[RMDB]
An RNA of 207 nucleotides, treated with 2A3 and DMS and read out base by base.
For DMS the reverse transcriptase was MarathonRT.
2A3 adducts were read by reverse transcription with SuperScript II with manganese.
The DMS profile rests on 2,564 reads.

RNA sequence: GGGAACGACUCGAGUAGAGUCGAAAAGGGGUCACCCGUUUGACGAGAGCGACAUGCUGAUACCACUGAAGCCUCCACGGUGGUACCAGCAACAGCGCUCUCCGAGGGUGACGGAGGCACCCAAAGAACAACCCUUGGUUCGCCAAGGGUUGUUCAACGUAUGAUUGAGUUUCGACUCAAUCAUACGAAAAGAAACAACAACAACAAC
Reactivity to 2A3 in 0.01 (KOAc 150mM, MgCl2 10mM, bicine 150mM(pH8.5), 24C), signal-to-noise 4, nucleotides 027 to 156: g080g030g020g010u020c010a000c000c000c010g000u130u170u130g010a000c020g000a000g000a000g020c030g100a140c120a260u300g000c010u010g010a010u000a000c000c000a010c000u020g020a140a020g010c000c000u010c000c000a030c010g010g000u000g000g000u000a000c010c000a010g010c020a050a020c060a080g010c000g000c010u010c000u000c000c000g000a040g000g000g000u000g000a000c010g000g000a010g000g020c000a020c000c000c010a060a120a040g000a000a000c000a000a000c000c000c000u000u000g040g000u050u040c200g010c050c000a000a000g000g000g000u000u000g000u000u000c000a000a000
Reactivity to DMS in 0.01 (KOAc 150mM, MgCl2 10mM, bicine 150mM(pH8.5), 24C), signal-to-noise 1, nucleotides 027 to 156: g000g020g050g040u000c010a050c020c000c000g020u040u010u010g010a160c220g020a030g020a030g040c000g020a060c060a250u020g020c000u000g010a050u000a010c020c020a040c000u060g000a020a220g010c050c010u020c010c010a180c030g040g020u010g000g010u000a010c000c010a020g020c000a030a050c180a110g030c040g010c000u010c000u000c020c020g000a060g040g020g000u000g010a110c030g040g010a040g030g060c000a080c010c020c020a050a070a140g020a070a020c010a040a030c010c000c000u000u000g000g020u000u010c300g040c000c000a010a000g050g010g030u000u000g010u020u000c000a000a170